[RMDB]
RNA sequence: GGGAACGACUCGAGUAGAGUCGAAAACGUGAUCAUAGCUCACUACAACCUCCGAUUCCUGGGCUCAAGCAAAACCCUCAUCUCAGCCUCCUGAGUAGCUAGGACUACGGGUGUGCACCACCAUGCCUGGCUAAUUUUUGUAUUUUCUGUAGAGAGGGUGUAAGUACGGAUUCGUCCGUACUUACACAAAAGAAACAACAACAACAAC
Reactivity to 2A3 in 0.01 (KOAc 150mM, MgCl2 10mM, bicine 150mM(pH8.5), 24C), signal-to-noise 1, nucleotides 027 to 156: c030g020u050g020a070u070c110a110u120a090g020c010u020c000a050c040u130a060c030a120a080c000c010u050c000c000g030a030u030u050c000c000u000g000g070g010c040u030c050a090a060g010c050a040a060a120a160c010c040c000u100c090a210u040c000u050c030a010g030c030c000u050c010c000u010g050a040g080u020a000g000c000u000a010g000g060a110c050u110a040c200g000g000g000u050g010u090g120c040a090c080c010a010c010c040a090u120g000c000c000u000g000g030c000u060a040a070u000u170u060u040u040g070u000a080u020u020u060u080c000u030g060u110a010g010a000g030a060g000g070